[RMDB]
RNA sequence: GGGAACGACUCGAGUAGAGUCGAAAAUGUGUGCUCGAGAGCCUCCCUGUCCGACAGAGCUUUUAGAUCUUCUGAUCUUUCCCUGGAGGAUAUCGCUUAUGCUUCAAGCGAUUCUCGGAUUAAUUAAUGUAAUCUAUACAUUCGUGUAUAGAUUACAAAAAGAAACAACAACAACAAC
Reactivity to 2A3 in 0.01 (KOAc 150mM, MgCl2 10mM, bicine 150mM(pH8.5), 24C), signal-to-noise 4, nucleotides 027 to 126: u140g070u010g030u050g020c020u010c040g100a070g010a010g040c000c010u020c000c010c030u020g040u000c010c020g010a020c020a030g070a020g020c000u000u060u030u060a020g000a020u010c010u250u060c150u300g010a010u000c000u010u020u010c020c000c000u010g040g010a020g000g030a040u030a010u050c000g000c000u040u030a060u260g070c030u100u120c090a000a000g000c010g020a030u050u000c010u010c010g010g020a050u100u260a240a130u130u130a060a050
Reactivity to DMS in 0.01 (KOAc 150mM, MgCl2 10mM, bicine 150mM(pH8.5), 24C), signal-to-noise 9, nucleotides 027 to 126: u010g010u000g020u010g010c020u000c030g000a100g010a180g000c040c030u000c010c020c070u000g010u000c020c020g000a120c090a080g000a070g000c250u000u000u000u000a020g000a020u000c000u000u010c290u010g000a020u000c010u000u000u000c010c000c000u000g010g010a130g000g000a070u010a020u000c010g010c000u000u000a080u010g010c160u010u010c100a040a010g010c000g010a020u000u000c020u000c000g010g010a130u000u000a080a110u010u010a070a160
Conditions: 150 mM KOAc, 10 mM MgCl2 and 150 mM bicine (pH 8.5), 24 C. Structure probing data (2A3 and DMS) for a 177-nucleotide construct. For DMS, 17,995 sequencing reads were counted. For 2A3, 5,659 sequencing reads were counted. Reactivities are rounded to 0.1 and cut off at 0 and 3.